Structure probing data (2A3 and DMS) for a 177-nucleotide construct. DMS adducts were read by reverse transcription with MarathonRT. For 2A3, 2,399 sequencing reads were counted. The DMS profile rests on 807 reads. The reactions ran in a buffer of 150 mM KOAc, 10 mM MgCl2 and 150 mM bicine (pH 8.5), at 24 C.

[RMDB]
RNA sequence: GGGAACGACUCGAGUAGAGUCGAAAACAUUCGCGACGUCUGCAGCCCGGUAGCCAUGUCGGCCAGGGUAAACCGCACGGUGGGCUCGUCGAGCAGCGAUCCGCCGAAGGCCUGUCGGUCGCGAACGCCUCCCCAAACGAUUCGUCGUUUGGGGAGGAAAAGAAACAACAACAACAAC
Reactivity to 2A3 in 0.01 (KOAc 150mM, MgCl2 10mM, bicine 150mM(pH8.5), 24C), signal-to-noise 2, nucleotides 027 to 126: c010a060u030u010c010g000c000g010a000c040g230u090c110u210g000c020a010g000c000c000c030g000g100u060a020g010c010c020a120u290g220u300c100g040g030c030c030a070g040g020g000u080a070a100a040c030c040g080c100a060c030g040g000u050g050g030g000c050u000c000g080u040c020g050a140g030c040a000g000c030g040a020u060c000c020g020c000c020g020a070a030g010g000c000c010u050g120u120c020g020g000u020c000g000c000g000a000a000c000g010
Reactivity to DMS in 0.01 (KOAc 150mM, MgCl2 10mM, bicine 150mM(pH8.5), 24C), signal-to-noise 1, nucleotides 027 to 126: c080a250u010u020c010g010c000g000a000c000g000u020c020u000g000c150a120g020c010c010c000g000g010u010a060g010c010c040a160u030g010u010c160g040g000c060c030a300g000g020g040u000a030a180a110c070c000g020c160a180c000g000g040u000g000g010g000c130u000c010g010u000c050g040a160g070c160a100g000c000g000a080u000c020c000g000c000c010g010a090a170g000g010c050c020u010g000u010c070g000g000u010c020g020c000g000a000a020c140g020